The record gives the reactivity of an RNA of 177 nucleotides to DMS and 2A3. The 2A3 profile rests on 880 reads. It was measured as part of the RMDB library OK1LIB. The RNA was probed in 150 mM KOAc, 10 mM MgCl2 and 150 mM bicine (pH 8.5) at 24 C. DMS adducts were read by reverse transcription with MarathonRT.
RNA sequence: GGGAACGACUCGAGUAGAGUCGAAAAGCUCUAGGAGACUAGAGCGAUACGUUAGAGAGCUCGUGGCAUGACUAACGGAUAGCCAGGUACGAGGUUGCCAGAGGACAUAGCUAUAGCUAUGUCCAAAGACCUAACAUACCUUCGGGUAUGUUAGGUCAAAAGAAACAACAACAACAAC
Reactivity to DMS in 0.01 (KOAc 150mM, MgCl2 10mM, bicine 150mM(pH8.5), 24C), signal-to-noise 2, nucleotides 027 to 126: g000c000u000c000u000a000g000g000a130g000a170c000u000a000g010a000g030c010g030a060u000a000c040g000u000u000a000g010a180g000a070g010c000u020c140g000u020g000g020c060a090u000g000a160c030u000a000a060c060g010g010a110u000a070g010c030c010a070g000g070u020a040c030g010a070g000g000u020u020g020c010c090a070g010a190g010g010a010c000a020u010a000g000c010u010a210u040a160g000c000u000a000u000g010u000c000c000a000a010a010
Reactivity to 2A3 in 0.01 (KOAc 150mM, MgCl2 10mM, bicine 150mM(pH8.5), 24C), signal-to-noise 1, nucleotides 027 to 126: g010c000u000c000u000a030g010g030a060g040a060c000u000a010g000a000g000c000g000a000u010a030c000g000u040u040a000g050a000g000a020g070c000u000c040g090u050g090g040c060a010u090g000a040c000u010a080a030c010g010g100a120u020a010g070c000c000a020g000g000u010a100c090g060a050g100g010u100u000g020c000c010a000g010a050g070g000a000c000a000u000a000g040c000u090a020u030a300g010c000u000a000u030g010u000c000c000a000a000a000